An RNA of 177 nucleotides, treated with DMS and 2A3 and read out base by base. Source: RMDB library TTRDES, as collected in RNAgym. For 2A3 the reverse transcriptase was SuperScript II with manganese. The RNA was probed in 150 mM KOAc, 10 mM MgCl2 and 150 mM bicine (pH 8.5) at 24 C.
RNA sequence: GGGAACGACUCGAGUAGAGUCGAAAAGAUAUGGACUCCAUUAGGGAGCUAUGCAUCGGAAACGAUGCCUAGCAUCGAUCUAAGGAGUCCUAAGUCAAAGUAGCAUAACGUUCGCGUUAUGCUACAACAUCUCCCACCACUUCGGUGGUGGGAGAUGAAAAGAAACAACAACAACAAC
Reactivity to DMS in 0.01 (KOAc 150mM, MgCl2 10mM, bicine 150mM(pH8.5), 24C), signal-to-noise 1, nucleotides 027 to 126: g000a000u000a020u010g000g000a030c000u010c020c010a110u000u000a020g030g000g000a120g060c000u000a000u000g000c000a010u000c000g060g000a040a030a080c010g010a000u000g010c000c050u000a000g000c000a300u000c300g040a100u010c000u000a030a020g000g010a010g020u000c000c020u070a000a100g000u010c020a130a160a110g030u000a000g000c020a010u000a000a010c000g020u000u020c300g030c010g050u010u000a020u000g000c010u000a000c020a110a260
Reactivity to 2A3 in 0.01 (KOAc 150mM, MgCl2 10mM, bicine 150mM(pH8.5), 24C), signal-to-noise 1, nucleotides 027 to 126: g020a020u000a000u060g020g010a010c000u000c010c000a080u000u080a020g080g090g070a270g050c000u010a010u040g000c000a000u000c000g000g000a020a010a000c000g000a000u010g020c020c010u010a000g000c000a100u300c300g210a140u000c000u000a000a050g010g000a000g000u010c000c000u000a000a000g010u000c000a000a050a170g000u030a010g030c000a000u050a020a010c020g010u040u050c300g040c000g130u010u020a000u010g000c000u010a000c000a000a030